[RMDB]
RNA sequence: GGGAACGACUCGAGUAGAGUCGAAAAGUUGUCCUGAGGGACGGGGAAGCGUUUACGUAUCAGCCAGAUCGAAAGACUCGACAGCGAGUCGCCCACCGGCAACCACGAGCCGAACGGCACUUGAUCCGCGAGAGAAUGUUUUCGAACAUUCUCUCGCAAAAGAAACAACAACAACAAC
Reactivity to 2A3 in 0.01 (KOAc 150mM, MgCl2 10mM, bicine 150mM(pH8.5), 24C), signal-to-noise 4, nucleotides 027 to 126: g070u080u050g030u050c000c010u000g050a110g020g060g010a000c020g000g020g020g020a090a060g050c060g040u030u080u150a150c060g080u150a050u160c010a010g100c020c030a020g010a110u050c060g110a090a030a040g000a010c000u010c010g010a020c020a080g080c000g000a000g000u010c000g000c000c000c000a020c000c000g000g000c030a050a040c020c030a030c120g050a000g000c010c000g000a070a020c020g030g000c010a010c030u030u040g040a060u050c030c060
Reactivity to DMS in 0.01 (KOAc 150mM, MgCl2 10mM, bicine 150mM(pH8.5), 24C), signal-to-noise 1, nucleotides 027 to 126: g000u040u000g020u060c000c000u000g010a160g090g040g000a050c000g000g000g010g010a010a140g010c090g010u000u020u000a080c140g000u000a120u040c180a130g070c050c050a010g090a020u010c120g050a050a050a270g020a020c020u000c000g000a090c240a160g000c030g050a000g000u000c000g000c020c080c030a150c080c000g000g000c000a050a040c000c050a020c050g010a100g000c050c020g020a040a100c130g000g000c180a080c040u030u000g000a070u000c300c060

Chemical mapping of a 177-nucleotide RNA with 2A3 and DMS. For DMS, 1,168 sequencing reads were counted. For 2A3 the reverse transcriptase was SuperScript II with manganese. Values cover nucleotides 27 to 126. The 2A3 profile rests on 2,247 reads. For DMS the reverse transcriptase was MarathonRT.